An RNA of 177 nucleotides, treated with DMS and 2A3 and read out base by base. High DMS reactivity at an A or C suggests that its Watson-Crick edge is free. Reactivities are given for positions 27 through 126. The data come from the RNA Mapping Database (RMDB), library OK2TST.
RNA sequence: GGGAACGACUCGAGUAGAGUCGAAAACUCGCCGGCAUCGCGCGGCGCCACUAGCCAUUGCCAAUGGCCAAGCAGGAACAGGCGCGGUACCUCGGCGCGCAGGGCGCCAUCGAUCAGCGCGGCGCAAGCAUAGCCAAAAUUUCGAUUUUGGCUAUGCAAAAGAAACAACAACAACAAC
Reactivity to DMS in 0.01 (KOAc 150mM, MgCl2 10mM, bicine 150mM(pH8.5), 24C), signal-to-noise 9, nucleotides 027 to 126: c040u010c010g030c020c010g020g040c020a080u000c010g020c160g020c080g020g010c070g030c000c010a120c050u000a150g000c000c020a030u000u010g030c220c190a090a080u010g000g010c000c050a060a140g010c090a090g010g020a080a120c160a130g010g010c000g010c060g010g010u010a110c060c060u010c120g010g010c020g010c060g000c030a090g010g010g010c000g010c000c000a060u000c040g000a040u010c160a090g010c010g010c020g020g010c000g010c180a090a110
Reactivity to 2A3 in 0.01 (KOAc 150mM, MgCl2 10mM, bicine 150mM(pH8.5), 24C), signal-to-noise 6, nucleotides 027 to 126: c010u000c010g010c010c010g010g000c020a010u010c010g010c010g000c160g100g010c010g010c000c000a200c020u030a030g000c010c010a080u070u270g110c050c050a050a040u050g010g000c000c010a100a020g040c060a060g090g130a110a100c050a110g160g000c010g000c010g020g040u080a120c010c030u070c070g060g000c010g000c010g010c030a040g040g030g000c010g000c000c000a030u040c020g020a030u050c070a080g020c110g020c000g130g000c000g000c010a020a020